[RMDB]
RNA sequence: GGGAACGACUCGAGUAGAGUCGAAAAUGGACUUUUUACAGGUCCUACUUAUCCGGUUUUAACGCUGUUUUAUUGGCGCAAAGGUUUACGGAUAAACAACUAAUAAUUAAACCUUUUGUGUGCGAAAAUUGGACGUUUAGGUUCGCCUAAACGUCAAGCCUACUGUGAGGUUCGCCUCACAGUAGGCAAAAGAAACAACAACAACAAC
Reactivity to 2A3 in 0.01 (KOAc 150mM, MgCl2 10mM, bicine 150mM(pH8.5), 24C), signal-to-noise 1, nucleotides 027 to 156: u070g000g000a000c000u030u040u040u150u300a070c210a090g000g000u000c000c010u000a030c010u000u000a010u000c010c010g020g050u000u050u000u080a060a050c050g000c050u060g150u070u230u060u150a150u150u260g030g030c000g000c030a080a000a000g020g000u000u000u000a010c010g000g000a000u050a060a080a010c030a000a000c030u130a110a130u050a170a030u210u180a010a000a010c000c000u000u020u050u120g050u030g000u030g040c110g040a030a020a060a080u110u130g080g010a000c000g000u000u000u000a000g030g000u040u010c090g000c080c000u000a000a000a000c000g000u010c000a000a000

Notes: An RNA of 207 nucleotides, treated with 2A3 and read out base by base. Values are in units of 0.01, from 0 to 300, in steps of 10. The RNA was probed in 150 mM KOAc, 10 mM MgCl2 and 150 mM bicine (pH 8.5) at 24 C. It was measured as part of the RMDB library M2RFPK. As a SHAPE reagent, 2A3 marks flexible, mostly unpaired nucleotides at the ribose 2'-OH.